An RNA of 177 nucleotides, treated with 2A3 and DMS and read out base by base. The reactions ran in a buffer of 150 mM KOAc, 10 mM MgCl2 and 150 mM bicine (pH 8.5), at 24 C. 2A3 adducts were read by reverse transcription with SuperScript II with manganese.
RNA sequence: GGGAACGACUCGAGUAGAGUCGAAAAGAUAUGGAUGACGAUAAGUGGGUCACACCAAGUCGGAAACGACUCGUGAUUCCACUUUUGACGUCAUCCUAAGUCAAACCUCGUCGUUCGCGACGAGGAAUCUAUGCGCGAUGUUCGCAUCGCGCAUAGAAAAAGAAACAACAACAACAAC
Reactivity to 2A3 in 0.01 (KOAc 150mM, MgCl2 10mM, bicine 150mM(pH8.5), 24C), signal-to-noise 1, nucleotides 027 to 126: g020a010u060a050u130g000g010a010u030g000a020c000g030a030u000a100a010g000u000g010g020g010u030c010a030c020a040c060c040a000a030g000u000c000g000g000a130a090a030c010g030a000c000u000c050g000u030g040a000u300u120c040c000a020c000u000u000u000u030g100a040c030g030u030c000a000u000c010c000u000a030a000g000u050c030a060a020a170c010c000u030c000g000u000c000g000u010u080c300g010c000g250a000c010g000a000g000g000a000a020
Reactivity to DMS in 0.01 (KOAc 150mM, MgCl2 10mM, bicine 150mM(pH8.5), 24C), signal-to-noise 1, nucleotides 027 to 126: g000a050u000a300u020g000g000a000u000g000a010c000g010a090u000a010a010g010u000g000g000g010u000c000a000c000a060c130c300a090a010g010u010c000g050g000a090a070a220c000g010a020c000u020c270g010u010g000a020u000u010c000c000a040c000u000u000u000u020g020a180c090g010u010c000a010u010c000c000u010a020a040g010u010c020a170a080a190c020c010u000c010g000u000c020g020u000u000c210g000c000g000a020c000g010a000g000g000a010a000